[RMDB]
This 177-nucleotide RNA was probed chemically with DMS and 2A3.
The RNA was probed in 150 mM KOAc, 10 mM MgCl2 and 150 mM bicine (pH 8.5) at 24 C.
RNA sequence: GGGAACGACUCGAGUAGAGUCGAAAACAUCUCGUGGCUAUUGAGAACGAAUGAAAUCAGAUGGUUCUAUUUCUCAAUCUUUCUGACUUGCUCCUACGAAACCAAGGUCGAAAAGAUUGCAAAAAUCGAACGGAUAACGGUUCGCCGUUAUCCGUUCAAAAGAAACAACAACAACAAC
Reactivity to DMS in 0.01 (KOAc 150mM, MgCl2 10mM, bicine 150mM(pH8.5), 24C), signal-to-noise 1, nucleotides 027 to 126: c040a020u000c050u000c000g000u000g010g000c030u060a020u020u000g000a070g000a000a080c170g000a060a140u000g070a070a130a090u000c150a020g000a230u030g060g000u000u000c060u000a110u000u000u000c020u040c020a030a000u000c000u000u000u000c020u000g020a030c000u000u000g090c090u000c050c020u040a140c170g000a060a030a200c110c010a000a060g000g020u000c010g000a000a060a000a020g000a010u000u000g010c230a000a020a060a060a180u010c160
Reactivity to 2A3 in 0.01 (KOAc 150mM, MgCl2 10mM, bicine 150mM(pH8.5), 24C), signal-to-noise 4, nucleotides 027 to 126: c040a050u080c020u000c090g050u080g110g040c050u040a060u100u160g050a100g040a090a060c090g100a080a130u200g070a100a000a050u070c050a030g100a140u150g120g000u010u070c020u060a100u030u060u000c080u010c000a000a000u020c000u000u030u000c020u120g050a050c000u010u050g040c000u060c000c090u130a160c110g080a080a040a010c010c000a050a080g070g040u010c010g000a030a020a010a020g020a000u020u070g040c080a040a060a010a050a090u190c110
It was measured as part of the RMDB library OK1LIB. For DMS the reverse transcriptase was MarathonRT. The 2A3 profile rests on 2,354 reads. For DMS, 1,226 sequencing reads were counted.